[RMDB]
Structure probing data (2A3 and DMS) for a 177-nucleotide construct. For 2A3 the reverse transcriptase was SuperScript II with manganese.
RNA sequence: GGGAACGACUCGAGUAGAGUCGAAAAAGAUGCUUGAUUUGCUGCUCCCUCUCUUUACUCUUCCUGCUGUGCUUGUGCAUAUGCGUGUACUUCCAGUACAACUUUAUGGGGGAGACUCACGCCUCAACGAAAGGUUAGAUUUCGAUCUAACCUUUCGAAAAGAAACAACAACAACAAC
Reactivity to 2A3 in 0.01 (KOAc 150mM, MgCl2 10mM, bicine 150mM(pH8.5), 24C), signal-to-noise 9, nucleotides 027 to 126: a000g100a040u160g010c060u090u070g050a140u190u100u240g060c050u030g020c010u020c000c040c000u020c010u010c020u050u140u100a140c060u040c040u110u050c020c030u030g010c010u020g020u040g050c030u100u120g050u090g070c060a010u080a100u250g140c150g040u010g000u010a020c020u140u050c040c020a010g020u030a040c030a110a100c140u140u220u170a200u160g020g000g000g010g010a010g000a020c020u010c020a020c050g040c000c000u050c040a080a100
Reactivity to DMS in 0.01 (KOAc 150mM, MgCl2 10mM, bicine 150mM(pH8.5), 24C), signal-to-noise 5, nucleotides 027 to 126: a080g010a050u010g010c030u000u000g000a110u020u010u010g010c030u020g000c020u000c010c010c010u000c030u010c060u000u000u030a080c080u000c070u000u010c010c000u000g020c040u010g000u000g010c020u040u030g020u010g030c020a030u010a050u030g010c060g030u010g000u000a030c010u020u050c150c110a110g020u000a030c080a060a110c160u020u040u000a090u020g000g010g000g020g020a030g000a060c120u000c050a080c110g000c020c020u000c070a060a260